Chemical mapping of a 177-nucleotide RNA with 2A3. For 2A3, 614 sequencing reads were counted. For 2A3 the reverse transcriptase was SuperScript II with manganese. The data come from the RNA Mapping Database (RMDB), library OK1LIB.

RNA sequence: GGGAACGACUCGAGUAGAGUCGAAAACAAACAAACAUAAACAUAAAAACGUAACGUGAUAGCCAAUGACAGCUAGGCAAUCACGAAACGAAAUAGCUGUCAUAAGCAGCAGAAAAACUGCUGCAAAGCAGAGUACGUCCUUCGGGACGUACUCUGCAAAAGAAACAACAACAACAAC
Reactivity to 2A3 in 0.01 (KOAc 150mM, MgCl2 10mM, bicine 150mM(pH8.5), 24C), signal-to-noise 1, nucleotides 027 to 126: c030a000a150a000c050a000a000a260c230a100u300a150a300a000c080a080u300a070a130a070a030a000c080g000u080a300a070c000g000u000g000a090u000a060g050c000c000a050a000u210g000a000c000a000g000c000u000a000g000g050c000a000a000u040c000a000c000g000a000a090a000c000g010a040a040a040u270a000g010c000u000g000u030c000a000u020a090a090g000c000a000g000c000a000g150a000a170a000a020a000c000u060g010c000u000g000c000a000a000a000